[RMDB]
RNA sequence: GGGAACGACUCGAGUAGAGUCGAAAAAGAUAUGCUCAGCGUUGGUCUUCGUAGGUCUAAGAAGACGCCUUAUUAUGACUCCGGAAGAGUGGAGUUUAUUGAACAAAAUGCAGAAAUCUUGGACAAAGAUUAUGAUAGCAUUCGUGCUAUCAUAAUCAAAAGAAACAACAACAACAAC
Reactivity to DMS in 0.01 (KOAc 150mM, MgCl2 10mM, bicine 150mM(pH8.5), 24C), signal-to-noise 7, nucleotides 027 to 126: a080g000a100u000a070u010g010c010u000c040a090g020c100g020u000u000g010g010u000c040u010u000c070g010u010a090g010g010u010c030u000a040a060g000a030a030g000a230c230g000c020c110u000u000a100u010u010a080u010g000a020c000u000c020c020g010g020a110a110g010a180g020u000g010g010a030g000u000u000u010a060u010u000g010a070a110c170a070a050a080a080u010g010c030a040g000a100a090a060u000c020u000u000g010g010a060c050a090a090a110
Reactivity to 2A3 in 0.01 (KOAc 150mM, MgCl2 10mM, bicine 150mM(pH8.5), 24C), signal-to-noise 5, nucleotides 027 to 126: a000g070a030u100a020u120g020c000u010c040a030g010c020g060u050u050g040g050u020c030u040u010c050g080u090a060g010g140u010c020u020a030a040g020a010a000g010a020c010g010c000c010u090u080a100u080u050a050u140g010a000c000u010c010c030g110g090a190a040g110a110g150u180g010g010a010g010u000u030u030a040u020u050g020a040a000c050a080a140a040a030u110g010c010a000g060a040a190a020u010c010u030u020g000g000a010c010a040a130a010
An RNA of 177 nucleotides, treated with DMS and 2A3 and read out base by base. Reactivities are given for positions 27 through 126. Source: RMDB library OK2TRN, as collected in RNAgym. DMS adducts were read by reverse transcription with MarathonRT. In probing experiments dimethyl sulfate is read out at A N1 and C N3, which are open when not base-paired. The DMS profile rests on 7,788 reads.